[RMDB]
RNA sequence: GGGAACGACUCGAGUAGAGUCGAAAACCGCUACCCACUACGUGCAUAAUACGCUGGGCUUCGGCUAACAUCAUUGCCACCGCAUGUUGAUUUUGUAGGUCAGCGUUGCGUGCAUCGGCUUGAUUGACUACCACAGGACUUUCGAGUCCUGUGGUAGAAAAGAAACAACAACAACAAC
Reactivity to DMS in 0.01 (KOAc 150mM, MgCl2 10mM, bicine 150mM(pH8.5), 24C), signal-to-noise 2, nucleotides 027 to 126: c030c040g010c110u010a100c040c020c050a120c170u000a100c100g060u000g020c060a070u000a050a210u000a040c000g000c000u000g020g000g000c030u000u000c040g010g000c140u000a040a060c050a010u010c070a070u010u000g000c020c070a130c220c180g020c060a020u000g000u000u010g000a050u000u000u010u020g010u000a040g050g000u000c000a010g020c000g020u010u010g000c260g000u000g000c040a010u020c110g030g030c060u020u010g020a100u000u000g000a240
Reactivity to 2A3 in 0.01 (KOAc 150mM, MgCl2 10mM, bicine 150mM(pH8.5), 24C), signal-to-noise 3, nucleotides 027 to 126: c020c000g000c090u110a110c010c040c020a060c090u130a060c060g020u010g020c000a020u020a060a040u070a110c020g000c010u020g010g090g030c000u050u050c040g100g010c020u020a040a000c010a050u070c010a020u020u240g020c030c030a100c020c040g000c020a010u010g020u020u030g100a170u050u080u080u100g100u070a060g050g300u000c010a000g020c000g030u010u040g000c000g040u040g000c000a040u060c020g010g010c000u050u120g020a070u090u120g020a030

Conditions: 150 mM KOAc, 10 mM MgCl2 and 150 mM bicine (pH 8.5), 24 C.
This 177-nucleotide RNA was probed chemically with DMS and 2A3.
The DMS profile rests on 1,454 reads.
Values cover nucleotides 27 to 126.